[RMDB]
RNA sequence: GGGAACGACUCGAGUAGAGUCGAAAACUCGUCUGGUUCGCCAGACGAGAAAGAAAAUCCGAGCGAAGGGAAGGGCACAAACGCUCCGAGUGCCCAAACCCAAAACGUGGGGGUUCGCCCCCACGAAGAGAAGGUGUAAGUUCGCUUACACCUUCUCAAAAGAAACAACAACAACAAC
Reactivity to DMS in 0.01 (KOAc 150mM, MgCl2 10mM, bicine 150mM(pH8.5), 24C), signal-to-noise 2, nucleotides 027 to 126: c010u000c000g000u000c000u010g000g010u000u010c190g050c010c020a030g000a000c000g010a010g010a040a040a130g000a080a100a100a060u000c020c000g030a140g000c070g020a140a120g010g000g000a190a280g000g000g010c010a020c000a040a070a130c120g010c060u010c090c020g000a150g020u010g010c000c010c000a000a090a130c010c000c030a070a030a090a090c030g020u000g000g000g030g000g010u000u020c190g000c000c000c000c000c000a000c000g010a060a070
Reactivity to 2A3 in 0.01 (KOAc 150mM, MgCl2 10mM, bicine 150mM(pH8.5), 24C), signal-to-noise 3, nucleotides 027 to 126: c000u000c000g010u000c020u020g040g030u030u070c190g020c100c000a000g000a010c000g000a000g000a000a010a010g010a010a070a000a010u060c020c010g030a020g050c070g070a160a040g010g000g030a040a050g000g000g000c030a020c010a040a190a030c120g050c110u070c060c040g060a030g010u000g010c020c000c010a040a090a080c000c000c000a020a090a000a040c020g000u010g000g010g000g000g010u040u060c190g120c000c010c000c000c000a000c000g000a010a010
The data come from the RNA Mapping Database (RMDB), library M2PK50. Structure probing data (DMS and 2A3) for a 177-nucleotide construct. The DMS profile rests on 2,014 reads. Reactivities are given for positions 27 through 126. For 2A3, 3,674 sequencing reads were counted.